An RNA of 177 nucleotides, treated with 2A3 and DMS and read out base by base. Reactivities are rounded to 0.1 and cut off at 0 and 3. The reactions ran in a buffer of 150 mM KOAc, 10 mM MgCl2 and 150 mM bicine (pH 8.5), at 24 C. The DMS profile rests on 956 reads. Source: RMDB library OK2TST, as collected in RNAgym.
[RMDB]
RNA sequence: GGGAACGACUCGAGUAGAGUCGAAAAAUGAUUUUGACCCCACCCGGAAGGUUUGGUAUAUGACACCACAGGAGGCCAUUUUGCGUCACCGCCACACAUUCGACCGUGGCAACCUCAUCGUGGUCGAUCGUUACGUCGAAUUCGUUCGACGUAACGAAAAAGAAACAACAACAACAAC
Reactivity to 2A3 in 0.01 (KOAc 150mM, MgCl2 10mM, bicine 150mM(pH8.5), 24C), signal-to-noise 1, nucleotides 027 to 126: a000u050g080a050u120u090u070u210g170a070c020c010c000c090a030c000c060c000g050g000a090a060g020g000u050u090u080g050g060u010a090u050a090u220g060a080c050a000c110c000a030c000a020g040g040a010g010g000c020c000a080u210u250u130u240g050c080g010u020c040a040c040c050g000c010c000a000c000a000c010a070u050u170c030g000a020c000c040g000u010g000g040c010a030a040c000c000u000c030a140u130c000g090u050g000g000u000c000g000a010
Reactivity to DMS in 0.01 (KOAc 150mM, MgCl2 10mM, bicine 150mM(pH8.5), 24C), signal-to-noise 2, nucleotides 027 to 126: a060u000g010a140u000u000u000u000g020a160c050c000c010c080a130c070c010c000g010g000a120a040g000g010u010u000u000g000g000u020a140u010a080u010g040a100c190a060c020c020a030c300a100g000g020a070g030g010c030c010a130u010u000u010u030g020c140g020u000c010a080c050c140g050c000c000a040c060a130c200a210u000u030c040g020a000c040c030g010u010g000g000c020a020a080c020c000u000c130a010u010c090g010u000g050g000u000c010g010a000